[RMDB]
RNA sequence: GGGAACGACUCGAGUAGAGUCGAAAAGAUAUGGACCGUUAUAGUGGCGAAGAACUCGGAAACGAGGGAGCCAUAUACUGCGGUCCUAAGUCAAAGUGGAAAGUAGUCUUCGGACUACUUUCCACAACGUAAGACUGUUCUUCGGAACAGUCUUACGAAAAGAAACAACAACAACAAC
Reactivity to DMS in 0.01 (KOAc 150mM, MgCl2 10mM, bicine 150mM(pH8.5), 24C), signal-to-noise 2, nucleotides 027 to 126: g000a060u000a300u000g010g000a000c000c000g020u000u000a110u000a080g010u010g020g000c010g000a090a080g030a110a170c030u000c000g010g010a140a110a130c010g010a010g050g000g000a110g000c000c000a000u000a060u010a020c260u020g000c000g000g000u000c010c020u010a010a110g010u020c060a050a120a190g000u000g000g010a030a000a000g000u000a000g000u000c000u000u000c140g010g000a000c000u000a010c010u000u010u010c010c010a000c000a010a080
Reactivity to 2A3 in 0.01 (KOAc 150mM, MgCl2 10mM, bicine 150mM(pH8.5), 24C), signal-to-noise 2, nucleotides 027 to 126: g020a010u080a060u120g000g010a000c010c010g010u020u030a080u020a090g160u020g000g010c010g160a300a020g030a040a090c000u000c000g020g050a090a040a040c010g000a000g000g030g000a000g040c000c050a010u030a030u020a050c100u040g030c010g000g000u020c000c000u010a070a020g020u000c010a160a060a030g000u030g040g000a000a000a000g030u010a000g000u000c030u090u160c300g030g000a000c000u000a000c000u000u000u000c000c000a000c000a000a000
Chemical mapping of a 177-nucleotide RNA with DMS and 2A3.
For 2A3, 2,780 sequencing reads were counted.
DMS adducts were read by reverse transcription with MarathonRT.
Conditions: 150 mM KOAc, 10 mM MgCl2 and 150 mM bicine (pH 8.5), 24 C.